Record summary: The record gives the reactivity of an RNA of 207 nucleotides to 2A3. The 2A3 profile rests on 603 reads. The RNA was probed in 150 mM KOAc, 10 mM MgCl2 and 150 mM bicine (pH 8.5) at 24 C.
[RMDB]
RNA sequence: GGGAACGACUCGAGUAGAGUCGAAAAUUAAUACUGCUACAUUUUUAAGACCCUUAGUUAUUUAGCUUUACCGCCCAGGAUGGGGUGCAGCGUUCCUGCAAUAUCCAGGGCACCUUGGUGCAGCCUUCAUGCCUCAUGCCGUUCGCGGCAUGAGGAAGGUGCAAAAUUAGUUCGCUAAUUUUGCACCAAAAGAAACAACAACAACAAC
Reactivity to 2A3 in 0.01 (KOAc 150mM, MgCl2 10mM, bicine 150mM(pH8.5), 24C), signal-to-noise 1, nucleotides 027 to 156: u110u060a060a100u010a160c030u010g070c000u060a080c060a220u080u120u180u160u100a090a040g080a090c010c000c030u030u030a010g040u040u130a050u150u100u200a040g030c030u040u090u030a050c040c020g010c040c020c010a050g010g030a030u030g010g040g000g050u000g000c010a010g040c040g100u120u070c000c000u020g000c010a010a080u040a020u080c010c010a000g020g010g000c000a060c010c010u030u080g020g000u020g020c030a050g040c030c040u090u090c020a040u100g010c000c000u020c000a040u000g050c000c000g040u060u050c210g020c030g040g000c000a000u000g000a000g000g000a000a000